[RMDB]
RNA sequence: GGGAACGACUCGAGUAGAGUCGAAAAAUUAGGGCCGUUUGGUUAUGUCGUCACAUUAUUCGCAGUAUGGGCGGCGAUAAAUGCUUUCAAUAUGGUGGAUGGCAUUGAUGGCUUACUGGGGGGGUUAGAGAACUAAGAGUUUCGACUCUUAGUUCUCAAAAGAAACAACAACAACAAC
Reactivity to DMS in 0.01 (KOAc 150mM, MgCl2 10mM, bicine 150mM(pH8.5), 24C), signal-to-noise 3, nucleotides 027 to 126: a150u020u010a110g010g010g010c040c040g020u000u000u000g010g020u000u000a030u010g010u000c010g010u000c010a090c060a060u010u010a110u020u000c170g020c120a100g020u000a040u010g020g010g020c050g000g000c020g010a060u000a060a040a030u000g000c000u000u000u000c050a030a110u000a110u000g010g010u010g020g000a040u010g000g000c040a040u000u000g010a050u000g010g000c020u000u000a070c070u000g010g010g000g010g000g000g000u000u010a120
Reactivity to 2A3 in 0.01 (KOAc 150mM, MgCl2 10mM, bicine 150mM(pH8.5), 24C), signal-to-noise 2, nucleotides 027 to 126: a000u160u080a080g010g000g060c030c050g030u010u070u110g120g010u160u040a060u120g010u020c000g000u010c000a040c010a240u060u200a070u180u220c090g000c140a010g030u040a030u050g070g030g000c010g020g030c000g020a030u070a050a090a000u090g000c010u050u060u040c000a060a080u100a090u300g210g000u060g110g040a080u020g010g000c010a010u000u050g030a030u050g040g060c060u030u090a080c020u030g060g010g030g000g020g000g000u010u090a020

Record summary:
An RNA of 177 nucleotides, treated with DMS and 2A3 and read out base by base. It was measured as part of the RMDB library OK2TRN. Reactivities are given for positions 27 through 126. The RNA was probed in 150 mM KOAc, 10 mM MgCl2 and 150 mM bicine (pH 8.5) at 24 C. For 2A3 the reverse transcriptase was SuperScript II with manganese.